[RMDB]
RNA sequence: GGGAACGACUCGAGUAGAGUCGAAAAAUCCUGUUCGCAGGAUGAUUGAGAUAUGGACCCACGAUGUUCUUUGAUCUACCGUAACAUCUUAUCGGAAACGAUAAGUGGGUAGGGAGAACUAGUGGGUCCUAAGUCACCAGAGGGACUUCGGUCCCAACCAUACGGCAAGAUUCGUCUUGCCGUAUGGAAAAGAAACAACAACAACAAC
Reactivity to DMS in 0.01 (KOAc 150mM, MgCl2 10mM, bicine 150mM(pH8.5), 24C), signal-to-noise 1, nucleotides 027 to 156: a030u000c000c000u020g020u000u000c250g030c020a040g000g010a060u000g000a160u000u000g000a190g000a040u000a020u000g010g000a040c020c000c000a050c000g000a180u000g020u020u000c010u000u000u000g000a030u000c020u000a010c020c010g010u010a060a020c090a050u000c000u000u000a000u020c000g070g000a050a070a100c000g000a020u000a000a000g060u000g010g030g000u000a010g030g000g020a040g010a040a020c000u000a200g010u000g010g000g030u000c010c000u010a000a070g000u000c030a100c030c040a140g000a250g020g000g040a050c020u000u000c200g070g010u000c000c010c000a010a060